Structure probing data (2A3 and DMS) for a 177-nucleotide construct.

[RMDB]
RNA sequence: GGGAACGACUCGAGUAGAGUCGAAAAUCGAGAAAAGCCUCUAGCGAGUUUCAUGGCGGCCCGUACCCUAAACCGACUCAGGUGGUCAGGUAGAGAAUACCGAGGCGUUCGGGUGAACUAUGGUUAACUUUAACUUUAAGUUCGCUUAAAGUUAAAGAAAAGAAACAACAACAACAAC
Reactivity to 2A3 in 0.01 (KOAc 150mM, MgCl2 10mM, bicine 150mM(pH8.5), 24C), signal-to-noise 2, nucleotides 027 to 126: u080c010g000a010g070a020a140a040a040g060c030c020u050c050u060a060g040c020g040a060g010u000u080u190c030a020u030g020g000c000g000g020c000c010c000g000u010a010c000c000c010u060a130a080a020c010c020g070a060c080u050c190a050g150g000u060g010g050u100c060a070g020g010u020a020g020a000g030a210a050u020a040c030c000g020a020g030g000c080g000u020u030c010g010g000g000u020g030a030a010c020u040a050u090g080g000u060u060a030a020
Reactivity to DMS in 0.01 (KOAc 150mM, MgCl2 10mM, bicine 150mM(pH8.5), 24C), signal-to-noise 6, nucleotides 027 to 126: u010c080g010a160g000a110a110a160a200g010c080c010u000c050u010a080g010c050g010a080g010u000u000u010c040a030u010g010g030c140g010g000c020c010c020g010u000a030c030c010c010u000a050a100a080c080c040g000a100c110u000c120a150g010g020u010g000g010u000c100a080g010g010u000a030g000a200g000a130a110u000a010c020c010g000a040g000g010c180g010u000u000c030g020g000g020u000g010a070a100c040u000a030u010g010g010u020u010a050a130
For 2A3 the reverse transcriptase was SuperScript II with manganese. The RNA was probed in 150 mM KOAc, 10 mM MgCl2 and 150 mM bicine (pH 8.5) at 24 C. The data come from the RNA Mapping Database (RMDB), library OK2TRN.